[RMDB]
RNA sequence: GGGAACGACUCGAGUAGAGUCGAAAACAUUAUAUUGUUCGCAAUAUAAUGCAGGCCCGGGUGGUGUAGUGGCCCAUCAUACGACCCUGUCACGGUCGUGACGCGGGUUCAAAUCCCGCCUCGGGCGCCAUGAGCCGUACUGAUUCGUCAGUACGGCCAUGGGCUGAUGGUUCGCCAUCAGCCCAUGAAAAGAAACAACAACAACAAC
Reactivity to DMS in 0.01 (KOAc 150mM, MgCl2 10mM, bicine 150mM(pH8.5), 24C), signal-to-noise 1, nucleotides 027 to 156: c000a010u020u000a020u000a010u010u010g000u000u000c300g000c020a010a040u010a040u000a010a020u000g010c010a060g010g060c000c000c000g000g000g020u000g000g020u000g000u000a160g040u000g020g020c020c010c030a100u000c050a120u010a040c000g010a040c010c000c100u000g000u010c230a190c070g020g000u000c010g050u000g010a030c170g060c260g000g030g040u000u000c150a060a300a230u000c050c000c000g000c000c000u000c010g020g000g060c020g020c010c020a020u000g000a150g000c020c010g000u000a000c000u000g020a050u000u000c300g000u000c010a010g000u000a000c010g000g010c010
Reactivity to 2A3 in 0.01 (KOAc 150mM, MgCl2 10mM, bicine 150mM(pH8.5), 24C), signal-to-noise 1, nucleotides 027 to 156: c010a000u010u010a000u000a000u000u010g020u070u130c170g010c060a000a000u010a000u000a010a000u020g010c050a020g210g000c000c000c000g000g000g000u020g000g000u070g030u120a120g070u080g120g030c010c020c010a010u060c010a000u010a080c020g000a000c010c010c080u200g200u300c070a050c160g000g000u000c010g000u010g000a010c030g050c100g160g000g000u060u090c000a000a060a000u000c000c000c000g000c000c030u050c030g000g000g000c010g000c010c010a080u120g080a000g020c000c000g010u000a000c000u000g010a040u050u060c130g030u000c110a000g000u010a000c000g000g000c000
Chemical mapping of a 207-nucleotide RNA with DMS and 2A3.
The data come from the RNA Mapping Database (RMDB), library ARCHII.
DMS adducts were read by reverse transcription with MarathonRT.
The RNA was probed in 150 mM KOAc, 10 mM MgCl2 and 150 mM bicine (pH 8.5) at 24 C.
As a SHAPE reagent, 2A3 marks flexible, mostly unpaired nucleotides at the ribose 2'-OH.